Record summary:
An RNA of 177 nucleotides, treated with DMS and 2A3 and read out base by base. For DMS, 20,993 sequencing reads were counted. The 2A3 profile rests on 5,056 reads. The RNA was probed in 150 mM KOAc, 10 mM MgCl2 and 150 mM bicine (pH 8.5) at 24 C.

[RMDB]
RNA sequence: GGGAACGACUCGAGUAGAGUCGAAAACUUGGGUUAAAGACUCUGAUUGGCUGAACAAUAAGCAGAAUAUCCGCUGGAGAGGUGUGUCAUAUCCAAAUUGCGUUGUUAGGGCGUCACCUGAAAUGGCACUGAUGAAUUUAUUCGUAAAUUCAUCAGUAAAAGAAACAACAACAACAAC
Reactivity to DMS in 0.01 (KOAc 150mM, MgCl2 10mM, bicine 150mM(pH8.5), 24C), signal-to-noise 9, nucleotides 027 to 126: c060u000u010g010g000g010u000u010a070a120a150g000a070c040u000c020u000g010a090u000u010g010g000c040u000g010a070a090c120a080a090u010a090a080g010c050a050g010a110a090u000a080u000c050c040g010c040u010g000g010a110g000a070g000g010u000g010u000g000u000c050a060u000a080u010c080c060a040a070a130u010u000g010c110g010u000u000g010u000u000a090g000g000g000c050g010u000c060a050c020c010u010g010a050a060a080u010g000g010c150
Reactivity to 2A3 in 0.01 (KOAc 150mM, MgCl2 10mM, bicine 150mM(pH8.5), 24C), signal-to-noise 3, nucleotides 027 to 126: c010u060u090g050g000g030u050u050a160a120a020g050a040c020u010c020u060g070a170u080u100g050g000c020u030g040a050a020c030a070a130u150a100a030g000c030a010g040a070a050u080a050u080c020c040g000c040u020g000g040a080g020a020g060g020u060g010u030g010u020c020a030u040a040u130c020c010a020a060a110u150u140g030c050g010u040u050g070u050u090a040g040g000g000c020g030u030c030a030c020c010u010g020a070a090a040u060g020g000c020